[RMDB]
RNA sequence: GGGAACGACUCGAGUAGAGUCGAAAAGCUGUGGUGAUCGCCUUUGUGUGCUUGGAAGUGACCUUGCAGGUGGUUGAUAGAAGCAGUCAGUAGAGCGAUCUGUACUUCUGGUGAACCUGUGUCAUUAUGACUGGGACCAUUUCGAUGGUCCCAGUCAAAAAGAAACAACAACAACAAC
Reactivity to DMS in 0.01 (KOAc 150mM, MgCl2 10mM, bicine 150mM(pH8.5), 24C), signal-to-noise 1, nucleotides 027 to 126: g020c030u020g030u000g010g010u000g020a080u000c040g060c000c010u010u000u010g020u000g000u000g030c020u010u000g010g040a080a160g010u020g000a070c060c140u000u000g010c080a070g000g010u020g010g020u000u000g000a150u010a140g000a050a010g000c000a070g010u000c050a040g000u010a100g000a170g010c080g020a010u000c000u010g000u010a070c060u000u010c010u000g000g020u000g000a030a070c010c020u000g010u020g010u000c060a010u000u000a100